Chemical mapping of a 207-nucleotide RNA with 2A3. The reactions ran in a buffer of 150 mM KOAc, 10 mM MgCl2 and 150 mM bicine (pH 8.5), at 24 C. Values cover nucleotides 27 to 156.
RNA sequence: GGGAACGACUCGAGUAGAGUCGAAAAAGUGAGUAUGGCUCGUCACGACGAGCCAUACUCACAACGGUUUUCCUAAAUCGUCGUGAGACGGACCUUGGAAAACCUAGUAUUUAAAUAACUAGGUCAAAUUAGCCUAGAUCCUUCGGGAUCUAGGCAACUUUUAUAUUCUGUUCGCAGAAUAUAAAAGAAAAGAAACAACAACAACAAC
Reactivity to 2A3 in 0.01 (KOAc 150mM, MgCl2 10mM, bicine 150mM(pH8.5), 24C), signal-to-noise 1, nucleotides 027 to 156: a000g000u000g000a000g000u000a000u000g000g010c000u030c030g020u060c140a030c250g210a030c030g000a030g020c000c000a000u000a000c000u000c000a000c010a000a000c000g000g000u000u000u000u000c000c000u000a010a000a000u040c010g000u000c000g030u070g170a070g000a050c000g000g000a000c020c010u010u020g000g000a010a000a020a000c000c000u020a010g000u000a050u070u120u060a050a190a130u120a070a050c080u060a010g010g000u010c020a000a030a240u150u180a060g000c000c010u000a010g000a000u000c000c000u000u080c170g070g010g000a000u020c000u010a000g010g010c000a000a000
It was measured as part of the RMDB library M2RFPK.